[RMDB]
This 177-nucleotide RNA was probed chemically with 2A3 and DMS.
It was measured as part of the RMDB library OK1LIB.
2A3 is a SHAPE reagent: it acylates the 2'-hydroxyl of flexible nucleotides of all four kinds.
Conditions: 150 mM KOAc, 10 mM MgCl2 and 150 mM bicine (pH 8.5), 24 C.
2A3 adducts were read by reverse transcription with SuperScript II with manganese.
RNA sequence: GGGAACGACUCGAGUAGAGUCGAAAAAGGAGUCUGAUUAUGAUCCUGACUUUGAGUACGAACGCACUCCCAGUGAAUACGUACCUAAGUUUCCGCAAUAUAUCGAAAGAGGGUUCGCUCGCGGUGAAAAAGGGAGGGUUUUCGAACCCUCCCUUUUAAAAGAAACAACAACAACAAC
Reactivity to 2A3 in 0.01 (KOAc 150mM, MgCl2 10mM, bicine 150mM(pH8.5), 24C), signal-to-noise 1, nucleotides 027 to 126: a000g080g000a060g060u000c000u060g090a300u110u120a080u260g000a000u000c000c000u010g000a030c010u050u000u190g030a060g020u030a030c020g000a180a020c170g020c010a000c000u130c050c020c050a010g070u000g000a020a020u060a040c020g000u000a000c000c000u000a000a000g000u010u010u010c000c000g010c000a150a000u200a000u070a060u180c070g070a200a200a170g070a020g020g020g030u030u010c010g000c010u020c000g000c000g000g000u000g000a010
Reactivity to DMS in 0.01 (KOAc 150mM, MgCl2 10mM, bicine 150mM(pH8.5), 24C), signal-to-noise 3, nucleotides 027 to 126: a030g010g010a030g000u040c020u000g000a060u010u020a040u040g000a070u000c010c020u000g000a070c000u000u020u000g020a160g000u000a010c010g000a050a210c300g000c010a010c030u010c030c100c100a160g020u000g000a060a060u010a220c010g000u000a000c000c020u000a010a020g010u000u000u000c010c020g000c130a090a080u050a060u040a030u000c040g020a120a070a130g000a060g000g010g020u000u010c020g030c040u000c030g000c080g000g000u000g020a020